[RMDB]
RNA sequence: GGGAACGACUCGAGUAGAGUCGAAAAAUUGGGAAUAUGAUAAUGAUCCAGCUAAACUUAUAGAUUACGAAAAGAUACAAAACUGUUUUACAAAUACUUUUAUCCCAUUUGGGGAAAUGUAUAUUAGUGCGGAUAUAGCCCGUUUUGGCUCAGAUAAACGACUAUAAAGGUUCGCCUUUAUAGUCGUAAAAGAAACAACAACAACAAC
Reactivity to DMS in 0.01 (KOAc 150mM, MgCl2 10mM, bicine 150mM(pH8.5), 24C), signal-to-noise 1, nucleotides 027 to 156: a010u010u000g010g010g030a080a180u000a050u010g000a280u030a090a080u010g020a220u000c060c020a170g060c040u000a030a090a080c030u010u000a060u000a140g020a160u000u020a140c060g000a100a110a060a110g000a190u000a280c030a060a000a040a060c080u000g020u000u000u010u000a080c030a130a060a120u000a070c010u000u020u000u000a080u040c000c000c000a300u020u000u000g090g000g020g000a000a070a030u000g000u000a000u000a130u000u000a010g000u000g000c060g020g010a060u010a130u000a110g010c000c010c110g030u010u000u020u030g040g000c010u040c050a030g040a070u020a060a050
Reactivity to 2A3 in 0.01 (KOAc 150mM, MgCl2 10mM, bicine 150mM(pH8.5), 24C), signal-to-noise 2, nucleotides 027 to 156: a000u130u150g000g020g000a070a060u160a060u160g020a060u060a170a070u270g000a000u000c010c010a010g030c020u030a050a100a000c000u140u000a060u100a210g060a110u100u170a030c030g020a060a070a090a020g020a030u110a110c060a000a080a080a010c010u020g040u030u080u090u020a040c030a000a150a070u010a040c000u080u120u140u290a170u120c000c000c010a230u070u170u220g070g000g030g000a000a070a030u090g030u000a050u010a010u110u140a000g020u000g020c050g020g030a000u080a010u010a110g000c000c000c000g030u030u000u020u050g010g000c020u020c160a000g050a070u120a160a290